[RMDB]
RNA sequence: GGGAACGACUCGAGUAGAGUCGAAAACUUACGUGGUUCGCCACGUAAGAAAGUGGAAGAGGUGCGAUGAACCCACACAAAACAAGACAUCGAAAAAUAAAAAAACACGCUGCUUCGGCAGCGUGAAGUACACUAUCAACUUCGGUUGAUAGUGUACAAAAGAAACAACAACAACAAC
Reactivity to DMS in 0.01 (KOAc 150mM, MgCl2 10mM, bicine 150mM(pH8.5), 24C), signal-to-noise 1, nucleotides 027 to 126: c000u000u020a010c000g020u010g010g000u000u000c180g040c000c000a000c000g010u000a000a000g020a070a050a090g020u000g030g000a160a090g010a070g020g020u000g000c020g000a030u010g010a190a060c030c000c010a040c030a110c110a090a050a120a090c070a080a010g020a110c040a020u000c030g020a010a070a060a070a100u030a040a040a070a060a100a040a130c000a000c010g000c000u000g000c010u000u010c200g010g020c000a000g000c000g000u010g000a000a070
Reactivity to 2A3 in 0.01 (KOAc 150mM, MgCl2 10mM, bicine 150mM(pH8.5), 24C), signal-to-noise 2, nucleotides 027 to 126: c000u000u000a000c000g000u000g010g030u030u040c090g010c090c000a000c010g010u000a000a000g000a010a020a010g020u030g040g060a120a080g050a120g090g110u110g080c020g010a010u040g020a070a070c000c010c000a010c000a010c000a040a130a020a010c060a050a010g070a030c000a020u050c050g070a040a020a020a080a040u200a010a140a050a030a000a000a010c010a000c000g030c000u000g000c000u040u050c210g110g000c010a000g010c000g000u000g000a000a000
This 177-nucleotide RNA was probed chemically with DMS and 2A3. DMS adducts were read by reverse transcription with MarathonRT. 2A3 adducts were read by reverse transcription with SuperScript II with manganese. High DMS reactivity at an A or C suggests that its Watson-Crick edge is free. Values are in units of 0.01, from 0 to 300, in steps of 10. For 2A3, 3,135 sequencing reads were counted. It was measured as part of the RMDB library M2PK50. 2A3 is a SHAPE reagent: it acylates the 2'-hydroxyl of flexible nucleotides of all four kinds. For DMS, 1,014 sequencing reads were counted.